An RNA of 207 nucleotides, treated with 2A3 and read out base by base. Reactivities are rounded to 0.1 and cut off at 0 and 3. Values cover nucleotides 27 to 156. The data come from the RNA Mapping Database (RMDB), library RNAMAK. The RNA was probed in 150 mM KOAc, 10 mM MgCl2 and 150 mM bicine (pH 8.5) at 24 C.

[RMDB]
RNA sequence: GGGAACGACUCGAGUAGAGUCGAAAAGGGGUCGUCGCCGGUGAAAUACGUCGCAAGCUCGACGAUCUAUACUGAAGCCUCCACGGUAUAGGGAGAGCUUGGACGGAGACGACGGAGGCACCCAAAACGGAAGCAUCCCUUCGGGGAUGCUUCCGAACCUGUAGACUGUGUUCGCACAGUCUACAGGAAAAGAAACAACAACAACAAC
Reactivity to 2A3 in 0.01 (KOAc 150mM, MgCl2 10mM, bicine 150mM(pH8.5), 24C), signal-to-noise 2, nucleotides 027 to 156: g060g000g040g030u040c020g000u010c010g000c050c050g110g050u250g090a090a100a040u080a000c020g010u010c080g010c300a000a000g000c000u030c000g280a300c020g000a140u000c010u000a000u000a000c000u000g040a150a020g020c010c000u010c000c000a000c000g010g000u000a000u000a000g000g000g000a000g000a000g000c000u000u000g000g000a000c010g000g010a080g000a000c030g000a000c010g000g000a000g000g000c000a010c000c010c000a040a150a010a000c040g000g020a010a000g020c030a000u020c040c010c050u160u270c300g020g000g000g000a000u010g000c000u000u030c000c000g000a000a000